Structure probing data (DMS and 2A3) for a 207-nucleotide construct. For 2A3 the reverse transcriptase was SuperScript II with manganese. For 2A3, 1,144 sequencing reads were counted.
RNA sequence: GGGAACGACUCGAGUAGAGUCGAAAACUCGCUCAAACAUACAGAGGUGUUGUGCGAGAUGAAUCUCUCUGCAUUAGAAUGGUCGAAGAAUCAGCGGCGAUUCGAGACCCAAUUAGAAGCCGCAUUAACAGCUUUGGAACACGCCUUGCUGACGUGACAGUAGGCAUGAGUUCGCUCAUGCCUACUGAAAAGAAACAACAACAACAAC
Reactivity to DMS in 0.01 (KOAc 150mM, MgCl2 10mM, bicine 150mM(pH8.5), 24C), signal-to-noise 1, nucleotides 027 to 156: c000u000c010g000c000u000c000a090a010a090c020a190u010a300c050a270g000a090g010g080u000g020u010u000g000u000g020c040g040a030g000a090u000g000a230a160u000c050u000c010u010c090u000g010c030a100u000u000a060g010a150a060u000g000g030u000c040g000a140a180g000a050a030u000c010a100g030c050g000g000c070g000a090u000u000c020g000a300g000a090c000c030c110a010a100u000u000a130g000a120a100g020c000c000g000c040a240u000u000a020a090c050a000g080c000u070u000u020g050g060a130a210c030a170c000g020c010c040u000u000g020c140u010g000a090c010g070u040g000a170
Reactivity to 2A3 in 0.01 (KOAc 150mM, MgCl2 10mM, bicine 150mM(pH8.5), 24C), signal-to-noise 2, nucleotides 027 to 156: c000u000c010g030c000u060c020a120a060a030c010a020u250a060c110a110g080a050g060g070u040g000u040u020g000u010g000c030g030a000g000a010u100g060a060a090u050c040u000c000u000c060u120g070c060a200u080u130a120g150a240a170u150g010g000u000c010g000a080a020g010a000a010u040c030a090g000c000g000g000c020g000a000u000u000c010g000a010g030a020c040c000c000a050a140u170u210a030g070a100a000g010c000c000g020c010a010u020u090a060a050c000a000g090c060u030u200u260g050g020a070a020c020a000c010g000c000c010u020u060g000c000u000g020a020c010g020u000g030a040